[RMDB]
RNA sequence: GGGAACGACUCGAGUAGAGUCGAAAAGCGUACUACAAGCUUCUAGGGAGCGAGGAUCUAUAUGUCGCUGUCCCAAAUAGGACAGCGAGAUAUAGGGAGCUCCCUUCUAGCUUGUAUCGCAAACGUUUUCACCAAUGUUCGCAUUGGUGAAAACGAAGAUAGCCCUUUGUUUCGACAAAGGGCUAUCAAAAGAAACAACAACAACAAC
Reactivity to 2A3 in 0.01 (KOAc 150mM, MgCl2 10mM, bicine 150mM(pH8.5), 24C), signal-to-noise 1, nucleotides 027 to 156: g000c010g020u100a120c040u000a000c030a000a000g000c010u000u000c030u020a020g000g010g010a020g000c000g020a300g020g020a010u010c010u000a000u030a000u030g280u130c000g040c000u000g000u040c000c010c020a210a300a250u300a020g000g000a000c000a000g020c010g010a000g040a000u000a000u000a030g000g000g000a010g000c000u000c000c000c000u000u010c000u000a000g010c000u000u000g000u000a000u150c010g030c000a040a040a040c010g000u000u000u000u000c000a000c010c000a000a010u010g020u060u090c210g000c170a000u010u010g000g020u000g000a000a000a000a000c000g000a000a000
The record gives the reactivity of an RNA of 207 nucleotides to 2A3. Conditions: 150 mM KOAc, 10 mM MgCl2 and 150 mM bicine (pH 8.5), 24 C. Source: RMDB library RNAMAK, as collected in RNAgym. For 2A3 the reverse transcriptase was SuperScript II with manganese.